[RMDB]
The record gives the reactivity of an RNA of 177 nucleotides to DMS and 2A3. For DMS, 1,336 sequencing reads were counted. The 2A3 profile rests on 1,317 reads. 2A3 adducts were read by reverse transcription with SuperScript II with manganese.
RNA sequence: GGGAACGACUCGAGUAGAGUCGAAAAGAGAGAACGGGCCGAACGAGGGGAGAUAUACGACCUCGUGCUGGUCGAUCUCACCCUUCCCGGCAUGGACGGAUGGCAGUUCGCGAGCGAGGUGAACGCCGUUUGUGCAGGCGUUCGCGCCUGCACAAACAAAAGAAACAACAACAACAAC
Reactivity to DMS in 0.01 (KOAc 150mM, MgCl2 10mM, bicine 150mM(pH8.5), 24C), signal-to-noise 2, nucleotides 027 to 126: g000a180g040a070g020a080a140c060g010g010g030c010c010g000a050a070c080g000a010g010g000g030g020a100g000a070u000a110u010a300c060g000a060c000c000u000c200g000u010g010c100u010g010g010u010c000g000a020u000c000u010c000a110c020c000c000u000u000c050c090c000g000g000c060a020u000g000g010a060c070g000g000a070u000g010g000c050a070g010u000u000c010g020c030g000a160g000c140g010a090g000g000u000g000a030a020c050g000c010c000
Reactivity to 2A3 in 0.01 (KOAc 150mM, MgCl2 10mM, bicine 150mM(pH8.5), 24C), signal-to-noise 1, nucleotides 027 to 126: g050a000g000a000g000a120a030c060g050g030g000c040c000g000a060a020c050g040a030g050g030g020g000a030g020a010u150a020u020a090c030g020a060c010c000u010c040g090u070g060c130u040g000g000u000c000g000a030u010c000u000c020a300c010c020c020u020u100c030c010c000g000g010c030a030u060g040g000a010c040g040g000a070u100g040g000c050a050g070u010u040c060g020c010g000a040g060c100g030a060g160g030u040g010a020a020c060g050c030c030